[RMDB]
RNA sequence: GGGAACGACUCGAGUAGAGUCGAAAACAGGACGCAGUAUCGCAGGCAGUAUCAAAGACCGGGACGAACGAGAAGUUCGAUCCCAACUCCGUCAUCGACAGCGGCAUCUUCGGUGCUGCUGGCGGCGCAAAUCGGGGCACUUCGGUGCCCCGAUUUGAAAAGAAACAACAACAACAAC
Reactivity to 2A3 in 0.01 (KOAc 150mM, MgCl2 10mM, bicine 150mM(pH8.5), 24C), signal-to-noise 1, nucleotides 027 to 126: c030a060g040g040a030c000g000c000a020g030u050a020u180c010g040c010a000g000g000c110a000g000u060a000u300c040a020a040a040g170a130c050c050g000g050g000a000c000g000a000a000c050g050a040g040a300a000g000u030u030c000g010a260u000c000c000c000a000a000c000u080c000c000g140u090c000a110u180c000g100a050c050a000g000c000g000g000c000a000u000c060u290u110c060g150g000u000g000c000u000g000c000u000g000g000c000g000g000c030g000
The record gives the reactivity of an RNA of 177 nucleotides to 2A3. 2A3 is a SHAPE reagent: it acylates the 2'-hydroxyl of flexible nucleotides of all four kinds. The RNA was probed in 150 mM KOAc, 10 mM MgCl2 and 150 mM bicine (pH 8.5) at 24 C. Source: RMDB library OK1LIB, as collected in RNAgym. 2A3 adducts were read by reverse transcription with SuperScript II with manganese.